RNA sequence: GGGAACGACUCGAGUAGAGUCGAAAAAGGAGUAAGACCAUAGCGAUAGGGAGAGAUGCUAGGAGUUAGAGGAGACCGAAGCGAGGAGGAAAGCAAAGAAAGCAACGGGGCUAGCCGUCAGGUGUUCAAGCAGAGAGGUUCGCCUCUCUGAAAAGAAACAACAACAACAAC
Reactivity to 2A3 in 0.01 (KOAc 150mM, MgCl2 10mM, bicine 150mM(pH8.5), 24C), signal-to-noise 6, nucleotides 027 to 129: a000g090g000a030g040u130a100a020g030a040c030c030a060u100a030g060c040g010a050u100a050g010g030g000a020g000a000g000a020u060g020c030u030a040g010g020a030g030u050u060a030g030a020g020g000a010g020a010c000c010g020a030a000g040c020g030a020g000g020a020g000g030a070a010a000g030c040a030a050a060g070a030a070a000g040c040a030a070c090g010g020g030g000c020u030a030g030c010c000g010u030c010a030g000g050u060g020u070u090c030a070a030g060
Reactivity to DMS in 0.01 (KOAc 150mM, MgCl2 10mM, bicine 150mM(pH8.5), 24C), signal-to-noise 7, nucleotides 027 to 129: a060g000g000a000g000u000a080a070g040a090c040c040a100u040a100g030c000g000a040u020a090g060g020g000a040g000a010g020a070u040g000c040u000a040g030g020a080g010u010u010a110g020a080g020g010a110g030a030c040c050g020a110a050g040c220g000a040g000g000a010g030g020a020a050a060g040c220a040a050a040g000a050a050a080g050c110a080a080c190g030g020g030g030c080u000a040g040c000c000g050u050c050a070g010g010u000g000u030u010c040a030a050g000